Structure probing data (2A3) for a 207-nucleotide construct. It was measured as part of the RMDB library VIROID. The RNA was probed in 150 mM KOAc, 10 mM MgCl2 and 150 mM bicine (pH 8.5) at 24 C.

RNA sequence: GGGAACGACUCGAGUAGAGUCGAAAACACUUCUCGAGAAUAUCUUCUCUUCCAUCGCGCUUCUUCUUCGAUUCGGAUCGGCUCAUCUCGACAAGAGGCGGCGGUCCUCAGUGCUCUUACUCUUUGUUUGUAAAGAGGAGACUGCUGGACUCGCCGCGCUAAGCUGACACUUCGGUGUCAGCUUAGCAAAAGAAACAACAACAACAAC
Reactivity to 2A3 in 0.01 (KOAc 150mM, MgCl2 10mM, bicine 150mM(pH8.5), 24C), signal-to-noise 2, nucleotides 027 to 156: c040a010c000u060u000c010u010c060g030a030g070a190a180u180a120u100c040u130u020c030u020c000u120u050c080c010a130u110c010g000c010g040c080u000u050c000u030u010c000u050u110c050g090a090u070u030c030g070g020a060u060c000g020g000c010u000c040a070u030c020u010c000g050a030c050a100a070g030a050g130g020c000g000g000c000g000g000u000c020c000u000c000a010g000u090g250c000u000c040u130u270a300c000u000c010u000u110u120g170u200u300u300g210u300a000a020a000g010a020g010g000a000g010a000c000u000g090c030u010g020g010a020c070u030c170g000c000c000g000c000